[RMDB]
RNA sequence: GGGAACGACUCGAGUAGAGUCGAAAAUCUACGAAGCCAUUUUCGAAGCCCUUCUCCUAGGUCAAAGUUUUGAAGUCUAGGUUCGAUUCCUAGUAUCUCAACCGAAAAGGGGAUAUAGUUCAACUGGCCUAACCUAUACUUUCGAGUAUAGGUUAGGAAAAGAAACAACAACAACAAC
Reactivity to DMS in 0.01 (KOAc 150mM, MgCl2 10mM, bicine 150mM(pH8.5), 24C), signal-to-noise 8, nucleotides 027 to 126: u010c030u010a080c050g010a060a090g010c080c110a080u010u010u010u000c030g010a130a110g000c030c010c020u000u010c020u000c020c020u000a090g000g020u010c080a070a100a120g010u010u010u010u010g010a030a140g000u010c000u000a020g000g000u010u010c210g000a300u020u010c000c000u000a020g010u010a090u000c020u000c040a040a050c050c040g000a040a060a080a040g000g000g000g000a090u020a060u010a100g000u010u000c030a040a050c050u000g010g010
Reactivity to 2A3 in 0.01 (KOAc 150mM, MgCl2 10mM, bicine 150mM(pH8.5), 24C), signal-to-noise 9, nucleotides 027 to 126: u030c010u040a050c040g050a040a010g060c060c040a090u100u090u050u100c040g040a040a010g030c000c010c000u020u030c020u010c000c020u040a050g030g040u060c060a090a070a130g010u010u070u090u150g050a070a030g050u020c000u000a000g010g000u010u080c050g020a020u060u090c000c000u010a010g020u020a090u030c030u000c010a020a070c030c010g060a080a050a030a030g020g000g000g020a010u060a020u030a090g010u020u040c050a120a090c060u030g030g010
An RNA of 177 nucleotides, treated with DMS and 2A3 and read out base by base. Conditions: 150 mM KOAc, 10 mM MgCl2 and 150 mM bicine (pH 8.5), 24 C. Reactivities are given for positions 27 through 126. For 2A3 the reverse transcriptase was SuperScript II with manganese. For DMS the reverse transcriptase was MarathonRT.